[RMDB]
RNA sequence: GGGAACGACUCGAGUAGAGUCGAAAAUAUGGAAACGAAGACAUGAAUUCUGUCUCGCAUUUCAUUGAUUGAAAUUUCAAAAUUAUGAGAAUCUACUUACUCGUAAUCAAUGUAGGUCCUAUAAUAAGUAAUAGCUAGGCUUCGGCCUAGCUAUUACAAAAGAAACAACAACAACAAC
Reactivity to DMS in 0.01 (KOAc 150mM, MgCl2 10mM, bicine 150mM(pH8.5), 24C), signal-to-noise 1, nucleotides 027 to 126: u030a050u000g000g000a000a000a220c000g000a150a100g000a000c010a000u000g040a280a080u040u060c240u000g030u000c000u020c000g000c120a060u020u000u000c000a050u000u070g020a220u000u000g000a000a160a070u050u020u000c080a020a140a100a080u000u020a010u020g000a030g000a050a040u000c120u000a010c100u000u050a030c130u020c060g000u030a060a080u030c160a030a040u010g050u000a030g000g000u000c030c000u000a130u020a010a070u000a020a190
Reactivity to 2A3 in 0.01 (KOAc 150mM, MgCl2 10mM, bicine 150mM(pH8.5), 24C), signal-to-noise 2, nucleotides 027 to 126: u150a020u020g000g000a010a030a060c060g060a080a060g060a040c040a030u040g260a160a200u300u100c050u030g000u000c000u000c000g090c060a020u000u020u000c000a020u010u060g210a170u040u020g010a020a000a200u040u090u070c030a270a090a090a000u060u000a000u070g020a010g000a030a050u120c010u100a100c040u120u080a020c000u010c030g130u120a000a000u050c120a030a110u150g010u000a030g040g010u040c010c010u080a090u010a300a000u180a200a020
Record summary:
This 177-nucleotide RNA was probed chemically with DMS and 2A3. It was measured as part of the RMDB library OK1LIB. The DMS profile rests on 1,338 reads. For 2A3 the reverse transcriptase was SuperScript II with manganese. The RNA was probed in 150 mM KOAc, 10 mM MgCl2 and 150 mM bicine (pH 8.5) at 24 C.